Notes: The record gives the reactivity of an RNA of 177 nucleotides to DMS and 2A3. It was measured as part of the RMDB library TTRDES. For DMS the reverse transcriptase was MarathonRT.

RNA sequence: GGGAACGACUCGAGUAGAGUCGAAAAGAUAUGGAUGUUACAAGGGAGCUGCCAUAUCGGAAACGAUAUGACAGCGACGAUCUUGACGACAUCCUAAGUCAAAGGGGAGUCCUUCGGGACUCCCCAACUACAUUAGGUACUUCGGUACCUAAUGUAGAAAAGAAACAACAACAACAAC
Reactivity to DMS in 0.01 (KOAc 150mM, MgCl2 10mM, bicine 150mM(pH8.5), 24C), signal-to-noise 4, nucleotides 027 to 126: g000a020u000a120u010g000g000a010u000g010u000u000a110c030a010a010g000g000g000a010g030c000u000g010c020c000a010u000a000u000c000g020g000a030a020a050c010g010a010u000a000u010g010a010c000a000g010c000g000a020c290g000a010u000c010u000u000g000a080c210g000a020c010a010u010c000c000u000a000a090g000u000c020a090a130a150g010g000g010g010a030g020u000c000c000u010u010c270g010g020g010a010c010u010c000c000c000c000a000a010
Reactivity to 2A3 in 0.01 (KOAc 150mM, MgCl2 10mM, bicine 150mM(pH8.5), 24C), signal-to-noise 3, nucleotides 027 to 126: g000a000u020a010u060g010g000a010u020g000u050u070a090c030a020a000g000g000g000a020g000c000u000g000c000c010a000u010a010u000c010g000g000a010a010a010c000g000a000u000a010u010g030a030c000a000g000c010g000a010c000g010a010u020c000u030u050g100a180c280g010a010c000a000u000c000c000u000a000a010g020u010c060a080a140a210g030g010g020g000a010g000u010c030c000u070u120c300g070g080g000a000c000u000c000c000c000c000a010a010